[RMDB]
The data come from the RNA Mapping Database (RMDB), libraries RFM100 and RFMREP. An RNA of 177 nucleotides, treated with 2A3 and DMS and read out base by base. 2A3 adducts were read by reverse transcription with SuperScript II with manganese.

RNA sequence: GGGAACGACUCGAGUAGAGUCGAAAAGAGGUAUUGUUAGAUUAAUUUUGUGGGACAUUAACAACAGCAUCAGCAGCAACAUCAGCUUUAGUUAAUGAAUCCUGGAAAGUUAAGUGACUUUAUUUAAUGACUUUAAUAUGUUCGCAUAUUAAAGUCAAAAAGAAACAACAACAACAAC
Reactivity to 2A3 in 0.01 (KOAc 150mM, MgCl2 10mM, bicine 150mM(pH8.5), 24C), signal-to-noise 8, nucleotides 027 to 126: g150a020g010g040u050a030u030u020g010u030u030a070g050a300u010u020a020a020u010u020u030u040g300u040g030g010g000a010c000a000u000u000a010a000c010a010a020c020a040g000c010a050u090c050a100g150c020a020g040c030a070a100c020a190u160c050a020g000c000u010u020u070a020g000u000u000a000a010u010g040a040a050u010c000c000u000g030g040a010a000a000g010u000u010a020a030g010u010g040a010c000u030u030u040a080u050u140u070a180a130
Reactivity to DMS in 0.01 (KOAc 150mM, MgCl2 10mM, bicine 150mM(pH8.5), 24C), signal-to-noise 7, nucleotides 027 to 126: g020a080g010g010u010a040u000u000g010u000u000a050g010a270u000u000a010a010u010u000u000u000g000u000g000g000g010a040c010a010u000u000a010a020c010a040a190c300a020g010c010a110u010c120a090g010c090a070g000c100a060a090c170a080u020c150a110g000c010u000u000u000a240g000u000u000a010a000u000g000a080a110u000c000c000u010g010g000a010a010a020g000u000u000a010a040g010u000g000a060c010u000u000u000a020u010u000u020a070a120